[RMDB]
RNA sequence: GGGAACGACUCGAGUAGAGUCGAAAACAAACCGGGCGCAGAAGCGGUUUAUCCGUCGCCUAUGGCACCGCAACCUGAUCCUCAAGGCGCGUCAGCUCGGCUUUACGACGCUGAUCGCGAUCAUGUGCUCGUGUCAAUUGUUCGCAAUUGACACGAGAAAAGAAACAACAACAACAAC
Reactivity to DMS in 0.01 (KOAc 150mM, MgCl2 10mM, bicine 150mM(pH8.5), 24C), signal-to-noise 2, nucleotides 027 to 126: c090a070a050a110c100c040g000g020g030c040g040c180a060g020a140a230g030c030g010g020u020u020u000a090u010c060c100g000u010c050g000c040c010u020a090u000g010g030c090a070c090c090g000c040a090a160c050c010u020g000a040u000c050c070u020c130a100a040g000g000c070g030c040g050u000c040a030g000c000u000c010g000g010c270u000u000u030a120c010g000a070c150g010c010u000g000a010u010c040g010c020g010a080u000c060a110u000g010u010g000
Reactivity to 2A3 in 0.01 (KOAc 150mM, MgCl2 10mM, bicine 150mM(pH8.5), 24C), signal-to-noise 2, nucleotides 027 to 126: c000a000a090a000c020c020g000g000g010c070g000c040a060g010a140a030g020c010g020g100u000u120u170a060u030c020c010g000u050c040g060c000c000u070a110u070g020g000c030a020c090c030g010c020a030a050c000c030u050g010a080u030c040c030u070c060a030a020g090g000c000g000c010g000u000c000a000g000c010u010c000g030g010c010u090u150u090a070c040g010a010c090g000c000u000g010a060u170c060g000c010g030a120u090c040a050u100g120u080g070
This 177-nucleotide RNA was probed chemically with DMS and 2A3. For DMS the reverse transcriptase was MarathonRT. Reactivities are given for positions 27 through 126. Conditions: 150 mM KOAc, 10 mM MgCl2 and 150 mM bicine (pH 8.5), 24 C. Source: RMDB library OK2TST, as collected in RNAgym.